[RMDB]
This 207-nucleotide RNA was probed chemically with 2A3.
RNA sequence: GGGAACGACUCGAGUAGAGUCGAAAAGGGGUUUGCGGCAGUGUUAGCUGCUAGGCCAGAGAUCGUGCACCUUAUUCAAUUAGUUGGUGGGCUUUAUAUCGCGUGGAUGGGUGUGUCCUCUGUGCGGUCUGGGUGGCAACGAAUCUGUCUAAUCCCAGAGGACGGUAUAGUUCGCUAUACCGUCCUCAAAAGAAACAACAACAACAAC
Reactivity to 2A3 in 0.01 (KOAc 150mM, MgCl2 10mM, bicine 150mM(pH8.5), 24C), signal-to-noise 1, nucleotides 027 to 156: g010g000g010g030u010u060u140g230c060g010g000c010a010g030u050g060u190u070a100g000c000u000g000c000u000a000g000g030c010c000a020g000a010g000a070u180c110g070u070g010c000a000c000c030u140u230a040u040u060c020a100a120u140u000a080g050u020u120g000g050u100g040g040g000c000u150u150u010a190u090a010u260c100g000c060g070u030g020g020a000u000g010g040g020u040g000u010g050u100c000c000u000c000u040g200u250g020c040g000g000u030c030u030g010g110g000u070g010g010c000a000a000c010g000a040a050u050c010u000g000u000c010u010a020a010u030c050c000c000a010
Values cover nucleotides 27 to 156. For 2A3 the reverse transcriptase was SuperScript II with manganese. Conditions: 150 mM KOAc, 10 mM MgCl2 and 150 mM bicine (pH 8.5), 24 C. Source: RMDB library OK3TST, as collected in RNAgym.